Notes
An RNA of 177 nucleotides, treated with 2A3 and DMS and read out base by base. The data come from the RNA Mapping Database (RMDB), library OK2TRN. The RNA was probed in 150 mM KOAc, 10 mM MgCl2 and 150 mM bicine (pH 8.5) at 24 C.
[RMDB]
RNA sequence: GGGAACGACUCGAGUAGAGUCGAAAAUGGACAGACCGAGUCCCGGGAAGCCCCAGCACUGCCGCUGCCACACUGCCCUGAGCCCAAAUGGGGGAGUGAGAGGCCAUAGCUGUCUGGCAUGGGCCUCCAACGGAAGAUUCUUCGGAAUCUUCCGUUGAAAAGAAACAACAACAACAAC
Reactivity to 2A3 in 0.01 (KOAc 150mM, MgCl2 10mM, bicine 150mM(pH8.5), 24C), signal-to-noise 2, nucleotides 027 to 126: u120g020g020a030c040a070g070a050c020c050g010a040g040u020c010c040c040g000g040g030a060a040g000c000c030c040c000a010g010c000a010c030u060g060c000c020g020c020u040g040c030c010a040c000a020c010u110g030c000c000c020u030g100a070g010c040c020c030a020a080a100u210g040g000g010g030g000a010g010u030g040a100g010a050g000g010c000c010a050u080a060g000c010u050g140u300c170u240g040g020c030a040u040g000g040g100c000c000u030c000
Reactivity to DMS in 0.01 (KOAc 150mM, MgCl2 10mM, bicine 150mM(pH8.5), 24C), signal-to-noise 3, nucleotides 027 to 126: u010g010g010a060c030a030g010a120c060c040g010a130g010u000c030c040c050g000g000g000a140a140g010c050c020c030c030a080g020c050a070c060u010g010c050c080g000c060u010g000c020c060a160c030a050c040u000g000c000c000c030u010g020a110g020c030c020c020a030a070a100u010g010g010g000g000g010a080g030u000g000a140g000a050g010g000c000c040a060u010a140g020c010u000g010u010c150u000g000g020c030a060u010g000g000g000c000c000u000c000
Description
For DMS the reverse transcriptase was MarathonRT.